[RMDB]
RNA sequence: GGGAACGACUCGAGUAGAGUCGAAAAGCUGGCUUGCCAAUAUCUUACAAAAAUCCUCAUUUCAUUAUGAAAACCAAGCGAUUGGCGCAUUCCAAAUUGAAGACCAUCAUCUGGUAUUUGUGCUAAGGUUAUAGGCAAUGUUCGCAUUGCCUAUAACAAAAGAAACAACAACAACAAC
Reactivity to DMS in 0.01 (KOAc 150mM, MgCl2 10mM, bicine 150mM(pH8.5), 24C), signal-to-noise 4, nucleotides 027 to 126: g030c090u000g010g030c050u010u000g020c020c030a070a080u010a040u000c050u010u010a140c150a030a070a060a100a080u010c050c030u010c060a090u000u010u000c110a070u010u010a080u000g000a060a050a080a140c100c080a040a080g010c140g010a110u000u000g010g020c040g030c050a050u000u010c030c020a040a030a080u000u010g020a050a070g000a100c140c090a050u000c070a040u000c140u000g000g010u000a050u000u010u010g020u000g010c050u010a060a070g020
Reactivity to 2A3 in 0.01 (KOAc 150mM, MgCl2 10mM, bicine 150mM(pH8.5), 24C), signal-to-noise 4, nucleotides 027 to 126: g030c050u020g020g010c020u070u080g030c010c010a040a020u050a030u110c050u060u120a070c080a010a170a030a040a060u060c020c040u060c030a070u040u060u050c050a050u080u300a100u190g020a040a060a050a080c010c000a030a020g050c030g150a110u040u090g030g000c020g000c010a010u060u000c010c010a080a060a090u110u120g040a100a010g060a070c010c010a030u040c000a020u010c040u030g020g020u080a110u070u070u060g020u020g020c020u030a080a030g120